RNA sequence: GGGAACGACUCGAGUAGAGUCGAAAAGCAUCCGUUCCCGAUAGAGGGUUCGGAUGCGGUUAGCAACCCUCUAUCGGGAAGCUAACCACCGUACGGUGGACAUGCGAAAGCAUGUCCAUCGUACGGAGCUCCUACAAGGCUUCGGCCUUGUAGGAGCAAAAGAAACAACAACAACAAC
Reactivity to 2A3 in 0.01 (KOAc 150mM, MgCl2 10mM, bicine 150mM(pH8.5), 24C), signal-to-noise 1, nucleotides 027 to 126: g030c030a070u120c130c060g080u030u020c000c000c000g000a020u030a030g010a020g010g020g000u070u230c230g010g130a060u110g030c020g010g000u080u190a020g000c020a000a070c000c030c000u000c000u030a010u030c000g000g000g000a000a010g000c000u040a050a020c030c040a030c010c000g000u000a000c000g000g000u000g000g000a030c000a000u000g000c000g040a070a010a010g000c000a000u000g000u000c000c000a010u010c000g000u000a000c000g010g010a000